Conditions: 150 mM KOAc, 10 mM MgCl2 and 150 mM bicine (pH 8.5), 24 C. The record gives the reactivity of an RNA of 177 nucleotides to DMS and 2A3. For 2A3 the reverse transcriptase was SuperScript II with manganese. It was measured as part of the RMDB library TTRDEL. The DMS profile rests on 1,383 reads. The 2A3 profile rests on 2,094 reads.
[RMDB]
RNA sequence: GGGAACGACUCGAGUAGAGUCGAAAAGAUAUGGAGUACGCUUUUGACGCUCGCGUGUCGGAAACGACACUGAAUGAGCGAUAAGCAUACUCCUAAGUCAAAAGAUAACGACUUCGGUCGUUAUCAAGUAAAAUUCCAGGUUCGCCUGGAAUUUUACAAAAGAAACAACAACAACAAC
Reactivity to DMS in 0.01 (KOAc 150mM, MgCl2 10mM, bicine 150mM(pH8.5), 24C), signal-to-noise 2, nucleotides 027 to 126: g020a040u010a300u010g010g000a010g000u000a010c070g010c010u000u000u000u010g000a200c090g000c000u000c010g000c100g000u000g040u010c000g000g000a090a040a160c000g030a000c010a010c000u000g010a080a100u000g000a000g000c000g020a060u000a010a000g000c000a050u000a000c000u000c010c000u000a010a100g000u000c010a080a100a110a180g000a010u010a000a020c000g000a010c000u000u030c210g030g010u000c000g010u000u000a000u000c000a040a070
Reactivity to 2A3 in 0.01 (KOAc 150mM, MgCl2 10mM, bicine 150mM(pH8.5), 24C), signal-to-noise 2, nucleotides 027 to 126: g020a000u050a020u090g010g000a010g010u000a020c020g010c010u070u140u100u190g300a150c160g010c010u000c020g110c030g010u000g000u010c000g010g050a030a000a070c010g020a000c010a020c050u070g140a150a200u300g000a000g000c020g080a050u020a000a030g000c000a010u000a000c000u000c010c000u000a030a000g020u000c010a040a020a040a200g020a000u000a050a000c030g000a000c000u100u140c300g090g000u000c000g000u000u000a000u000c000a000a000